Structure probing data (DMS and 2A3) for a 177-nucleotide construct.
The reactions ran in a buffer of 150 mM KOAc, 10 mM MgCl2 and 150 mM bicine (pH 8.5), at 24 C.

[RMDB]
RNA sequence: GGGAACGACUCGAGUAGAGUCGAAAAGUUUAGAAAUCUGACUCCUGGGAACACUAACACCCGUGUAUCCCGCUACACCAGCACGGCCCGACAUCGCCUACGCCGUGGUGCCGAUGGGACUGCCGAGCAGGCGCUAUGAAUUCGUUCAUAGCGCCUGAAAAGAAACAACAACAACAAC
Reactivity to DMS in 0.01 (KOAc 150mM, MgCl2 10mM, bicine 150mM(pH8.5), 24C), signal-to-noise 2, nucleotides 027 to 126: g020u000u000u000a060g010a130a150a090u000c040u010g020a070c050u000c030c020u000g010g010g010a070a070c040a040c010u000a100a140c130a090c100c140c110g000u000g010u000a150u010c000c010c010g000c140u010a050c080a100c080c060a060g020c090a040c020g010g000c030c070c040g010a160c090a060u000c070g010c010c040u000a070c140g000c060c170g020u000g010g020u000g000c040c000g000a130u000g000g010g010a110c090u000g000c010c040g010a090g020
Reactivity to 2A3 in 0.01 (KOAc 150mM, MgCl2 10mM, bicine 150mM(pH8.5), 24C), signal-to-noise 1, nucleotides 027 to 126: g010u040u100u180a190g050a060a300a150u160c070u040g080a030c040u010c060c010u060g010g030g000a040a030c000a010c050u120a240a040c060a090c090c070c030g030u000g000u030a240u010c000c010c010g000c030u080a060c020a060c060c040a020g000c040a000c030g030g000c010c000c010g010a010c030a080u010c020g030c030c010u050a020c150g120c120c080g060u050g010g010u010g000c030c010g010a030u030g010g020g040a010c040u030g030c020c020g030a040g070